[RMDB]
RNA sequence: GGGAACGACUCGAGUAGAGUCGAAAAGAAUUAACCACAAGAUGGGUUAUCGGGGAACAGUGAAUUGUGUACUGAAUUUUGGGGAAGGUCGUUUCACACCCGAAGGAGAAGCAGGCGCAAUUGGUGAGUACCAUGAUGGAUUCGUCCAUCAUGGUACAAAAGAAACAACAACAACAAC
Reactivity to DMS in 0.01 (KOAc 150mM, MgCl2 10mM, bicine 150mM(pH8.5), 24C), signal-to-noise 3, nucleotides 027 to 126: g020a130a100u010u010a070a100c040c010a090c080a110a100g020a110u010g000g000g000u000u010a060u000c020g010g000g020g010a110a140c150a080g000u000g020a040a060u000u000g030u010g010u000a060c040u010g020a060a120u000u010u010u000g000g010g000g030a150a120g020g000u000c090g000u000u000u000c040a110c090a100c020c020c020g020a050a040g010g010a090g000a100a090g000c040a030g000g000c040g000c090a030a060u000u000g000g000u010g020a240
Reactivity to 2A3 in 0.01 (KOAc 150mM, MgCl2 10mM, bicine 150mM(pH8.5), 24C), signal-to-noise 2, nucleotides 027 to 126: g090a000a070u100u060a010a040c030c010a040c070a100a030g090a160u160g050g000g000u070u040a060u080c030g010g000g000g040a060a090c030a080g020u060g130a070a060u160u100g040u030g050u150a090c020u030g030a110a140u070u060u080u170g030g020g000g030a040a050g050g010u030c030g000u000u090u060c090a070c010a030c060c000c020g030a030a010g040g060a110g000a070a000g010c000a000g060g000c010g000c030a020a090u040u050g020g020u070g080a040
Source information: An RNA of 177 nucleotides, treated with DMS and 2A3 and read out base by base. For 2A3, 2,048 sequencing reads were counted. The data come from the RNA Mapping Database (RMDB), library OK2TST. 2A3 adducts were read by reverse transcription with SuperScript II with manganese. The reactions ran in a buffer of 150 mM KOAc, 10 mM MgCl2 and 150 mM bicine (pH 8.5), at 24 C.